[RMDB]
RNA sequence: GGGAACGACUCGAGUAGAGUCGAAAAUGCAUGUCUAAGUACACACGAAUUAAAAGUGAAACCGCAAAAGGCUCAUUAUAUCAGUUAUGGUUCCUUAGAUCGUUAACAGUUACUUGGAUAAUUGUGGCGAUUGCAUCUUCUUCGGAAGAUGCAAUCGAAAAGAAACAACAACAACAAC
Reactivity to DMS in 0.01 (KOAc 150mM, MgCl2 10mM, bicine 150mM(pH8.5), 24C), signal-to-noise 1, nucleotides 027 to 126: u010g000c030a070u040g010u010c020u000a040a110g020u000a020c120a140c130a060c020g010a080a080u000u020a060a140a080a080g020u000g000a130a010a060c110c020g050c110a030a030a200a160g000g030c070u010c100a060u000u000a070u000a040u000c180a040g000u000u000a090u000g020g000u000u000c020c010u000u020a120g000a040u000c060g020u020u010a030a070c210a040g010u000u000a010c050u000u000g030g020a140u010a010a060u000u000g010u000g020g010
Reactivity to 2A3 in 0.01 (KOAc 150mM, MgCl2 10mM, bicine 150mM(pH8.5), 24C), signal-to-noise 1, nucleotides 027 to 126: u080g000c000a010u000g000u000c000u020a030a000g030u010a010c070a020c010a010c090g000a070a110u240u090a180a170a000a000g030u030g080a180a030a040c050c010g040c070a000a000a000a170g130g020c020u000c010a040u070u200a120u040a050u190c060a000g030u010u030a070u150g020g010u000u050c000c000u000u010a060g000a130u040c010g020u000u100a110a060c010a040g000u010u060a000c010u050u050g030g010a060u040a070a100u120u020g040u010g090g000
Source information:
This 177-nucleotide RNA was probed chemically with DMS and 2A3. High DMS reactivity at an A or C suggests that its Watson-Crick edge is free. For DMS, 684 sequencing reads were counted. Values cover nucleotides 27 to 126.